The record gives the reactivity of an RNA of 207 nucleotides to 2A3. The data come from the RNA Mapping Database (RMDB), library M2RFPK. The RNA was probed in 150 mM KOAc, 10 mM MgCl2 and 150 mM bicine (pH 8.5) at 24 C.

RNA sequence: GGGAACGACUCGAGUAGAGUCGAAAAUCGGACGGCAGCCAUGAGUCGCAACGCAAAGCCGCGGCAAGUGGAGUUAGCGAGAAGAGACUAGGCUUUGGUUUCUUCAAGUGAAGCGGUCACCAAUCAGAAUAGCUUGCGCAGUUCGCUGCGCAAGCAAACCCCUCUAAGUCUUCGGACUUAGAGGGGUAAAAGAAACAACAACAACAAC
Reactivity to 2A3 in 0.01 (KOAc 150mM, MgCl2 10mM, bicine 150mM(pH8.5), 24C), signal-to-noise 1, nucleotides 027 to 156: u210c070g020g000a000c010g120g040c010a000g080c020c020a020u010g000a030g040u000c000g000c010a070a050c160g050c210a150a200a020g080c100c070g010c030g000g020c050a050a060g010u020g010g000a100g020u070u120a000g040c010g010a070g000a040a000g000a010g010a010c000u010a100g130g130c070u140u120u100g040g000u000u030u000c000u000u000c000a040a020g010u030g070a050a020g010c010g000g000u010c000a040c100c040a010a130u110c010a050g120a220a080u090a040g000c000u040u020g100c000g000c000a020g080u100u150c230g000c100u030g020c000g000c000a010a010g010c000a000a000